[RMDB]
RNA sequence: GGGAACGACUCGAGUAGAGUCGAAAAGACACGACGGAGACGUCGUGUCAAAGAGUGGGAAACCACUCAAAGAGCCACAGCUUCGGCUGUGGCUCAAGGCGCGGCACCGUCCGCGGAACAAGUGGAAUGAUAAUUAGCGUUUCGACGCUAAUUAUCAAAAAGAAACAACAACAACAAC
Reactivity to 2A3 in 0.01 (KOAc 150mM, MgCl2 10mM, bicine 150mM(pH8.5), 24C), signal-to-noise 1, nucleotides 027 to 126: g000a000c000a000c010g000a000c000g040g000a070g030a030c010g000u000c000g010u000g000u020c000a010a000a000g000a000g000u000g000g000g030a020a050a070c010c010a000c000u000c000a050a050a000g020a020g000c000c010a010c000a020g060c000u050u200c300g040g100c000u050g010u000g000g010c000u010c000a000a000g000g000c010g000c000g000g000c050a080c220c160g100u130c010c010g040c030g020g020a090a020c050a080a020g080u110g200g100a150a160
Reactivity to DMS in 0.01 (KOAc 150mM, MgCl2 10mM, bicine 150mM(pH8.5), 24C), signal-to-noise 2, nucleotides 027 to 126: g000a030c000a010c010g000a020c000g010g000a240g000a240c000g080u000c000g000u020g000u000c000a000a090a090g010a000g010u000g000g010g000a180a130a180c000c000a010c000u000c000a020a060a100g000a020g050c010c000a010c000a000g010c000u000u000c230g030g030c000u020g080u000g010g000c010u000c000a010a050g000g000c000g060c000g010g000c020a300c080c080g000u010c000c000g000c000g010g010a060a090c180a070a090g000u010g000g020a190a130